[RMDB]
Description:
This 170-nucleotide RNA was probed chemically with DMS and 2A3. The RNA was probed in 150 mM KOAc, 10 mM MgCl2 and 150 mM bicine (pH 8.5) at 24 C. DMS adducts were read by reverse transcription with MarathonRT. For 2A3, 10,230 sequencing reads were counted. Reactivities are given for positions 27 through 129. It was measured as part of the RMDB library 15KLIB.
RNA sequence: GGGAACGACUCGAGUAGAGUCGAAAAACGUUGAUAUGGAUUUACUCCGAGGAGACGAACUACCACGAACAGGGGAACCUCUACCCGUGGCGUCUCCGUUUGACGAGUAAGUCGUAAGUCAACAUGCGCAGGACUCACUUCGGUGAGUCCAAAAGAAACAACAACAACAAC
Reactivity to DMS in 0.01 (KOAc 150mM, MgCl2 10mM, bicine 150mM(pH8.5), 24C), signal-to-noise 3, nucleotides 027 to 129: a070c230g020u050u000g040a010u020a150u110g060g000a010u010u000u000a020c020u040c050c000g010a000g040g000a030g050a010c030g000a110a050c080u010a290c070c000a000c000g030a050a130c200a050g100g000g030g100a170a130c000c040u100c130u020a160c100c160c000g020u020g020g020c040g010u020c010u000c030c020g060u000u000u000g000a110c300g010a020g050u030a000a000g020u020c060g080u060a070a140g020u010c000a020a000c020a030u040g010c100g010c110a030
Reactivity to 2A3 in 0.01 (KOAc 150mM, MgCl2 10mM, bicine 150mM(pH8.5), 24C), signal-to-noise 4, nucleotides 027 to 129: a020c050g000u000u000g040a040u020a090u300g080g000a000u010u000u010a010c000u000c020c000g020a030g000g020a000g000a000c010g020a070a040c120u160a040c100c020a010c000g040a150a040c080a080g010g010g000g050a050a150c010c020u000c020u060a030c000c020c000g000u000g010g000c000g000u000c000u000c010c000g010u080u030u080g010a020c030g000a000g000u000a000a000g000u000c000g010u040a040a010g030u000c000a000a010c000a020u130g070c090g000c030a040